RNA sequence: GGGAACGACUCGAGUAGAGUCGAAAAGGUAGAACUGGUGUUGGUAUUAUUAGACGAACUAACAGUACGCUACUUAGUGGCUUAUAUUACACAUCACUAUCAGGUGAUUUGUUAGGCUUUAAAAAUGUUAGUGAUGGUGUCAUUUAUUCUGUGACGCAAUUGAUCACUGGUUCGCCAGUGAUCAAUUAAAAGAAACAACAACAACAAC
Reactivity to DMS in 0.01 (KOAc 150mM, MgCl2 10mM, bicine 150mM(pH8.5), 24C), signal-to-noise 1, nucleotides 027 to 156: g020g010u000a030g030a120a080c060u010g030g020u010g010u000u000g030g000u010a080u000u000a120u010u000a100g020a180c070g050a170a110c010u000a020a110c040a060g030u000a080c110g000c020u000a040c010u000u000a070g030u010g000g040c040u000u000a080u000a140u000u010a060c080a090c050a060u000c010a000c020u000a100u000c130a000g020g000u000g000a090u000u000u000g020u000u010a080g020g000c090u000u000u020a000a040a080a070a070u010g010u000u000a010g030u000g000a080u010g000g020u000g010u000c060a020u000u000u000a060u040u010c100u010g000u010g000a020c030g030c060
Reactivity to 2A3 in 0.01 (KOAc 150mM, MgCl2 10mM, bicine 150mM(pH8.5), 24C), signal-to-noise 2, nucleotides 027 to 156: g030g010u020a000g030a110a040c030u050g010g030u050g030u020u060g030g030u070a030u180u020a070u080u090a150g090a140c050g070a120a060c030u030a050a030c000a030g040u040a030c080g010c040u060a040c040u100u060a020g060u040g030g010c000u100u000a010u020a010u160u160a010c000a000c000a040u000c000a000c020u070a110u190c050a020g000g130u040g060a040u030u020u020g040u000u080a050g060g020c050u050u100u210a000a120a030a010a000u090g010u010u020a040g000u000g040a040u060g060g070u000g010u000c010a000u020u070u250a200u100u060c110u080g050u020g000a000c020g000c040
Source information:
The record gives the reactivity of an RNA of 207 nucleotides to DMS and 2A3. For 2A3, 1,131 sequencing reads were counted. It was measured as part of the RMDB library OK3TST. The reactions ran in a buffer of 150 mM KOAc, 10 mM MgCl2 and 150 mM bicine (pH 8.5), at 24 C.